[RMDB]
RNA sequence: GGGAACGACUCGAGUAGAGUCGAAAAAAGUUCAGAAAAAAAGGAUAGGUGCAGAGACUCAAUGGAAGCUAUUCUAACAAAUGGAGUUGACAACAUUCAAUUGAUUAAUGAAGAUUUCUAACUUCUAAGAUUAACAUCUUUUCGAAGAUGUUAAUCUAAAAGAAACAACAACAACAAC
Reactivity to DMS in 0.01 (KOAc 150mM, MgCl2 10mM, bicine 150mM(pH8.5), 24C), signal-to-noise 6, nucleotides 027 to 126: a060a050g010u020u010c060a070g010a010a000a050a090a070a080a140g000g000a040u020a070g000g030u010g010c090a060g010a240g000a060c060u000c070a070a070u020g010g010a070a080g010c150u010a030u000u010c050u000a060a090c160a050a060a070u020g000g000a050g000u000u010g000a120c160a040a040c080a040u000u000c040a030a120u000u020g000a090u010u010a050a080u010g010a030a040g000a110u000u010u000c050u010a050a050c070u010u000c030u010a070
Reactivity to 2A3 in 0.01 (KOAc 150mM, MgCl2 10mM, bicine 150mM(pH8.5), 24C), signal-to-noise 6, nucleotides 027 to 126: a000a010g080u060u050c080a040g210a060a130a000a000a000a000a030g040g010a020u040a060g070g010u040g070c060a030g030a030g010a150c020u010c080a050a090u110g010g040a040a010g030c020u030a040u080u030c020u060a080a050c050a040a080a060u140g030g000a020g010u020u010g050a020c030a090a030c010a060u070u040c030a050a140u060u130g080a050u110u250a040a080u090g020a030a030g040a080u070u070u060c050u040a030a070c030u000u010c010u050a080